Overview: The record gives the reactivity of an RNA of 207 nucleotides to DMS and 2A3.

RNA sequence: GGGAACGACUCGAGUAGAGUCGAAAAAAGUUCAGGAUCUGGAGUAACCAACGGCGGCAAUGUUGCGGCGUCGGCUGCGAUGGUGUUCACUAUCGGUGACAUUAACAUUACGAUGGGUUCCGGUCAGGAUAGUAAGGGCAUGGAGCAAGGCGUGAGGGCAUUGCGUUAAAUUCGUUUAACGCAAUGCAAAAGAAACAACAACAACAAC
Reactivity to DMS in 0.01 (KOAc 150mM, MgCl2 10mM, bicine 150mM(pH8.5), 24C), signal-to-noise 1, nucleotides 027 to 156: a060a100g020u000u000c030a050g020g000a050u000c030u020g030g010a190g040u000a060a070c000c030a050a050c070g010g000c020g050g000c030a080a080u000g010u010u020g020c000g070g020c030g020u000c100g030g040c010u020g000c020g010a090u000g010g040u000g020u000u000c050a050c030u000a090u000c100g020g020u000g000a060c040a090u010u020a080a110c050a080u000u020a050c050g000a160u000g010g020g020u000u000c000c040g000g010u000c030a100g020g010a080u000a040g030u000a060a120g030g010g000c050a070u020g050g010a090g010c050a050a050g000g030c020g030u000g010a130g000g000
Reactivity to 2A3 in 0.01 (KOAc 150mM, MgCl2 10mM, bicine 150mM(pH8.5), 24C), signal-to-noise 4, nucleotides 027 to 156: a010a000g060u050u020c020a030g020g010a090u010c020u060g030g010a060g040u050a050a070c020c000a040a050c030g050g010c020g030g040c030a040a080u140g010u120u080g070c040g020g020c020g060u070c040g050g010c020u030g010c030g020a040u040g020g010u020g030u080u110c020a020c040u070a100u130c070g060g020u030g010a010c010a020u050u120a120a040c020a070u020u150a050c050g050a040u070g020g030g000u090u030c000c030g000g020u020c040a020g010g040a040u080a070g060u060a040a110g020g010g010c040a020u070g010g010a020g040c040a040a020g020g000c030g010u050g020a060g030g050